[RMDB]
Chemical mapping of a 177-nucleotide RNA with 2A3 and DMS.
RNA sequence: GGGAACGACUCGAGUAGAGUCGAAAAGGGUGAACAACUCGAAACCAGAGCAGCAAUAUAAUUUGCAAUGUGUAUACACGUUUGUUGCGGGAUCGAGGCAGCGUGUAAGGCUCGAAUUCGACCAUUAACGUCCUAUAGCGUUCGCGCUAUAGGACGUAAAAGAAACAACAACAACAAC
Reactivity to 2A3 in 0.01 (KOAc 150mM, MgCl2 10mM, bicine 150mM(pH8.5), 24C), signal-to-noise 2, nucleotides 027 to 126: g000g000g000u020g010a110a000c040a040a000c040u020c000g000a060a000a030c020c010a000g000a000g000c030a000g000c010a080a000u120a030u010a180a280u110u000u020g020c060a040a120u240g010u020g070u140a060u040a200c020a000c020g020u130u240u000g030u010u040g000c030g030g030g020a190u040c010g000a000g000g000c000a000g000c010g000u010g010u010a020a110g110g000c020u010c040g040a040a050u100u030c000g000a000c000c040a010u080u120a070
Reactivity to DMS in 0.01 (KOAc 150mM, MgCl2 10mM, bicine 150mM(pH8.5), 24C), signal-to-noise 2, nucleotides 027 to 126: g010g010g000u000g040a110a080c170a130a060c080u020c020g000a050a090a140c010c030a150g030a030g050c020a140g010c010a010a040u000a070u010a040a080u030u000u000g000c010a180a060u020g050u030g020u000a190u010a010c020a020c020g010u000u010u020g050u000u010g000c010g000g000g000a120u030c000g000a210g010g000c010a000g000c010g000u000g040u000a030a100g000g030c010u000c010g000a100a130u010u000c010g010a130c050c140a160u010u010a140
Overview: The 2A3 profile rests on 1,833 reads. The RNA was probed in 150 mM KOAc, 10 mM MgCl2 and 150 mM bicine (pH 8.5) at 24 C. Reactivities are given for positions 27 through 126. 2A3 is a SHAPE reagent: it acylates the 2'-hydroxyl of flexible nucleotides of all four kinds.